RNA sequence: GGGAACGACUCGAGUAGAGUCGAAAAGUCGUAAGCUGUUGAGCCACCUCAGCGGUAAAACUCACGGGCAUUUCAGCUAUCGGCGCCUGUUGCGCAUAGCUGGCGGCGGCGUCCGGUAAGGCCUCGGCGUCCGGUGGAGUUUCGACUCCACCGGACGAAAAGAAACAACAACAACAAC
Reactivity to 2A3 in 0.01 (KOAc 150mM, MgCl2 10mM, bicine 150mM(pH8.5), 24C), signal-to-noise 1, nucleotides 027 to 126: g070u070c060g030u060a000a040g020c000u010g030u030u070g010a020g000c040c050a170c010c000u020c030a010g000c040g000g040u070a030a060a040a000c080u040c040a010c060g010g010g000c030a010u020u140u170c020a080g000c020u010a000u050c080g140g010c000g050c000c010u200g040u130u160g000c050g020c000a050u100a160g030c070u070g100g020c050g020g000c000g020g000c000g070u060c000c010g050g030u080a100a020g140g000c000c000u030c030g080g010
This 177-nucleotide RNA was probed chemically with 2A3. Reactivities are given for positions 27 through 126. For 2A3, 705 sequencing reads were counted. It was measured as part of the RMDB library OK1LIB. The RNA was probed in 150 mM KOAc, 10 mM MgCl2 and 150 mM bicine (pH 8.5) at 24 C.